[RMDB]
RNA sequence: GGGAACGACUCGAGUAGAGUCGAAAACAACUGUUAUCUUGCCACUGCAUUGUUAACACUCCAACAAAUAGAGUUGAAGUUUAAUCCACCUGCUCUACAAAGGGCGGGUGAAGCUGCUAACUUUUGUACAUAACGGAAAGUUCGCUUUCCGUUAUGUAAAAGAAACAACAACAACAAC
Reactivity to 2A3 in 0.01 (KOAc 150mM, MgCl2 10mM, bicine 150mM(pH8.5), 24C), signal-to-noise 1, nucleotides 027 to 126: c000a010a010c060u060g020u110u060a050u080c040u070u140g060c020c040a180c060u130g040c020a040u040u100g060u050u000a050a000c030a010c030u040c030c000a030a030c040a020a220a080u150a110g060a010g000u000u050g000a020a020g010u030u050u190a100a090u030c010c010a000c000c010u000g020c000u050c000u030a110c100a130a210a040g030g010g000c000g000g000g030u030g010a000a000g000c010u050g030c000u010a030a040c020u020u090u000u000g040u030
Reactivity to DMS in 0.01 (KOAc 150mM, MgCl2 10mM, bicine 150mM(pH8.5), 24C), signal-to-noise 2, nucleotides 027 to 126: c050a050a130c160u000g000u010u010a000u030c050u000u000g000c030c150a090c150u010g000c090a090u000u000g000u000u000a030a020c050a070c040u000c010c020a050a020c070a040a110a110u000a140g020a130g010u010u000g000a060a010g000u000u020u020a060a080u000c100c000a010c000c010u000g020c000u000c010u000a090c300a080a120a080g000g000g010c000g020g000g000u000g000a030a020g030c080u000g000c110u010a080a070c040u000u010u000u000g000u000

The record gives the reactivity of an RNA of 177 nucleotides to 2A3 and DMS. The reactions ran in a buffer of 150 mM KOAc, 10 mM MgCl2 and 150 mM bicine (pH 8.5), at 24 C. Source: RMDB library 15KREP, as collected in RNAgym. Values cover nucleotides 27 to 126.